[RMDB]
RNA sequence: GGGAACGACUCGAGUAGAGUCGAAAAUGCUUACUCUGACGAUAUUGAUCAAGGUUUCAUGAUAGUCGAUAAGGUAGUAGGUUUUAACAUCUGCGAUGCAAUGAGUAGUGCACCAAUGACAUUAGAGUUUGACCUAGAUAGACAGCUUGAUAGAAUCGCCCACCAUACCUUUCGAGGUAUGGUGGGCAAAAGAAACAACAACAACAAC
Reactivity to 2A3 in 0.01 (KOAc 150mM, MgCl2 10mM, bicine 150mM(pH8.5), 24C), signal-to-noise 1, nucleotides 027 to 156: u060g020c000u000u000a000c000u030c010u130g010a000c000g000a030u000a090u070u180g010a030u080c140a110a060g210g000u020u050u000c070a080u130g050a030u000a150g020u020c000g030a030u010a130a010g070g000u050a000g000u000a030g000g110u000u110u000u290a150a090c010a110u040c050u000g080c080g000a020u020g070c000a000a110u090g000a000g080u020a000g080u010g010c000a000c030c020a030a080u090g000a110c140a190u180u000a130g000a000g020u000u000u020g000a000c000c000u000a000g000a100u000a070g090a100c070a050g000c070u040u070g100a000u060a090g110a070a030u030c060

Source information:
The record gives the reactivity of an RNA of 207 nucleotides to 2A3. Reactivities are given for positions 27 through 156. 2A3 adducts were read by reverse transcription with SuperScript II with manganese. The reactions ran in a buffer of 150 mM KOAc, 10 mM MgCl2 and 150 mM bicine (pH 8.5), at 24 C. Source: RMDB library OK3TST, as collected in RNAgym.